[RMDB]
RNA sequence: GGGAACGACUCGAGUAGAGUCGAAAAGAAGAUAAGAAAAUUUUCCGGUGGCCAACCGCCCGGGCCACCGUUACUCCACUCCACUCCUUCGGGACUGGUUUGGAGGAACAUAACUGGGCGGAGAGAAAUACCUAGCAUAGUUCGCUAUGCUAGGUAUAAAAGAAACAACAACAACAAC
Reactivity to DMS in 0.01 (KOAc 150mM, MgCl2 10mM, bicine 150mM(pH8.5), 24C), signal-to-noise 2, nucleotides 027 to 126: g000a120a060g000a080u010a110a170g030a130a110a060a090u000u010u000u010c050c000g000g010u000g000g010c000c000a010a140c020c000g030c000c000c000g020g000g020c020c010a010c000c020g020u020u020a130c010u000c010c000a000c010u000c000c000a000c120u000c000c000u000u040c100g050g010g030a010c120u000g010g000u010u010u010g010g050a000g000g030a010a020c240a010u030a060a010c060u020g050g030g020c000g000g050a180g010a080g000a080a090
Reactivity to 2A3 in 0.01 (KOAc 150mM, MgCl2 10mM, bicine 150mM(pH8.5), 24C), signal-to-noise 4, nucleotides 027 to 126: g040a060a010g070a040u230a180a060g130a120a140a170a130u080u120u090u050c020c000g000g000u010g000g000c000c040a170a180c050c000g000c000c000c000g000g000g000c000c000a000c000c000g000u000u030a010c000u000c000c010a000c000u000c000c000a000c000u010c000c010u030u090c200g050g000g000a000c000u000g000g000u000u000u000g000g000a000g000g010a000a010c000a050u270a130a030c080u070g000g000g000c010g030g010a010g000a000g000a010a230
Notes:
The data come from the RNA Mapping Database (RMDB), library OK1LIB. Chemical mapping of a 177-nucleotide RNA with DMS and 2A3. The 2A3 profile rests on 5,276 reads. The RNA was probed in 150 mM KOAc, 10 mM MgCl2 and 150 mM bicine (pH 8.5) at 24 C. The DMS profile rests on 2,465 reads.